[RMDB]
RNA sequence: GGGAACGACUCGAGUAGAGUCGAAAAGAACUUUGGCCGGCUCGGAAUAGAAUGAGGGGGUGCAAACUGCCCACUGGCAGAAAGGAUUAUAGCAAAUGCGUACCCUAUUGCAAUACAGCCCGGCCAACAUAGACUACUCUAUUCGUAGAGUAGUCAAGAAUAUCAUGAAGUUCGCUUCAUGAUAUUCAAAAGAAACAACAACAACAAC
Reactivity to 2A3 in 0.01 (KOAc 150mM, MgCl2 10mM, bicine 150mM(pH8.5), 24C), signal-to-noise 7, nucleotides 027 to 156: g030a080a020c030u060u020u030g010g000c000c000g000g000c010u040c060g040g040a110a120u150a180g090a110a080u220g020a140g000g020g000g000g010u060g000c010a030a050a070c020u010g010c020c020c060a170c170u130g010g000c010a000g070a050a060a010g110g040a060u160u130a100u220a150g060c050a040a060a060u060g010c030g030u100a060c000c000c000u040a080u040u110g080c050a040a040u070a140c020a020g010c010c030c000g000g000c000c000a000a000c000a000u040a010g000a000c000u000a000c000u000c000u010a030u080u030c090g070u040a000g000a000g000u000a000g000u000c000a000a000
Reactivity to DMS in 0.01 (KOAc 150mM, MgCl2 10mM, bicine 150mM(pH8.5), 24C), signal-to-noise 3, nucleotides 027 to 156: g000a100a100c060u000u000u000g010g020c000c010g010g040c020u000c040g010g020a220a180u000a120g000a110a070u000g020a100g010g000g010g030g040u000g040c040a060a090a170c040u000g020c010c000c140a140c130u010g030g000c020a050g010a240a100a130g000g010a160u000u000a120u000a130g000c080a080a110a100u000g000c040g010u010a120c000c020c020u000a130u000u000g000c050a060a180u000a110c050a080g000c080c030c000g040g020c000c000a010a010c100a090u000a160g000a020c010u000a020c010u000c000u000a040u000u010c260g020u000a020g010a030g000u000a000g010u000c010a010a070

Source information: This 207-nucleotide RNA was probed chemically with 2A3 and DMS. The RNA was probed in 150 mM KOAc, 10 mM MgCl2 and 150 mM bicine (pH 8.5) at 24 C. For 2A3, 7,350 sequencing reads were counted. Reactivities are given for positions 27 through 156. The data come from the RNA Mapping Database (RMDB), library M2RFPK.